[RMDB]
Source: RMDB library ARCHII, as collected in RNAgym.
Structure probing data (DMS and 2A3) for a 207-nucleotide construct.

RNA sequence: GGGAACGACUCGAGUAGAGUCGAAAACCGCCGAGCCUCUCCCACGGGUGAAGAUGGAUCGUUAUUUCAGUGGGAUAGUCAAGGGGAGUGCCCGCGGCCCCAAGGCGAAACUUUAGCAGGAUCGCUUCCCGGAAAUCCCUGCCAGGGGAGAGUCGGGGUCAAAAUACUAGUUCGCUAGUAUUUUGACAAAAGAAACAACAACAACAAC
Reactivity to DMS in 0.01 (KOAc 150mM, MgCl2 10mM, bicine 150mM(pH8.5), 24C), signal-to-noise 2, nucleotides 027 to 156: c020c000g010c010c000g010a300g020c110c000u010c020u000c020c010c000a180c070g000g020g030u010g000a050a080g010a180u000g000g000a100u000c180g000u000u000a070u010u000u010c070a140g040u000g040g010g000a040u010a050g030u010c080a100a250g000g010g020g010a030g040u000g000c000c010c010g010c000g000g020c020c010c040c070a050a300g030g020c020g000a140a080a100c030u000u000u000a110g000c040a070g000g000a120u010c030g020c010u000u010c000c000c000g000g000a100a170a120u010c010c010c010u000g030c060c110a120g000g010g010g030a030g000a030g000u010c010g010g010g000
Reactivity to 2A3 in 0.01 (KOAc 150mM, MgCl2 10mM, bicine 150mM(pH8.5), 24C), signal-to-noise 3, nucleotides 027 to 156: c000c010g000c010c000g040a030g010c000c010u000c000u010c030c000c000a060c040g030g000g020u060g060a110a050g090a120u170g060g030a120u150c130g090u180u200a200u110u250u120c050a030g010u040g010g010g020a020u030a010g070u040c050a050a050g010g000g010g000a000g010u030g010c000c020c010g040c010g050g010c000c000c000c060a040a080g010g000c020g010a090a040a010c020u110u150u090a050g030c040a030g020g040a030u130c010g010c000u050u030c030c010c000g040g000a070a130a040u030c010c000c000u050g050c010c020a030g040g000g020g000a010g000a000g010u050c000g000g000g020

For DMS the reverse transcriptase was MarathonRT. For DMS, 2,908 sequencing reads were counted.